[RMDB]
RNA sequence: GGGAACGACUCGAGUAGAGUCGAAAAGGAUGAUCUGGGCCCGGCCAGUGAUCCGAAUUAGUACCGGGAUUGCAUCGUCGAGCCGUCAGGGGCGAAGACGAGAACCUGAAAGCACGAAGCACUGGGCGGUGCGAGUGCGAGAUAUAACGCCCAACAAAGCCGCAUUAAUAUUCGUAUUAAUGCGGCUAAAAGAAACAACAACAACAAC
Reactivity to 2A3 in 0.01 (KOAc 150mM, MgCl2 10mM, bicine 150mM(pH8.5), 24C), signal-to-noise 1, nucleotides 027 to 156: g020g000a020u060g010a030u140c010u010g000g000g010c010c000c000g000g000c000c010a020g010u050g060a010u000c000c010g000a080a050u160u080a120g080u040a080c010c000g000g000g010a000u000u290g000c010a050u000c000g050u000c000g010a000g000c000c000g040u210c150a080g030g000g000g110c000g040a090a000g000a000c000g000a000g000a010a040c010c020u050g080a170a080a000g000c000a000c030g010a000a030g000c000a000c060u100g040g000g000c020g030g000u010g000c000g040a020g000u010g000c000g000a000g010a000u200a000u010a040a170c070g030c000c010c000a020a020c030a010a160
Reactivity to DMS in 0.01 (KOAc 150mM, MgCl2 10mM, bicine 150mM(pH8.5), 24C), signal-to-noise 1, nucleotides 027 to 156: g030g010a060u010g000a070u000c020u010g050g080g050c040c030c010g010g040c000c030a150g010u010g010a050u000c040c030g040a050a170u030u000a160g010u000a080c050c010g010g000g050a140u030u010g000c110a160u030c010g010u010c000g000a300g000c030c000g000u010c130a200g040g000g010g000c030g000a070a250g010a090c060g040a060g010a080a140c010c020u010g000a080a110a170g020c010a020c000g010a190a300g000c070a100c080u000g020g000g010c080g010g020u000g000c000g040a240g040u000g000c030g000a140g000a110u000a140u010a130a060c000g050c050c000c010a110a040c120a140a110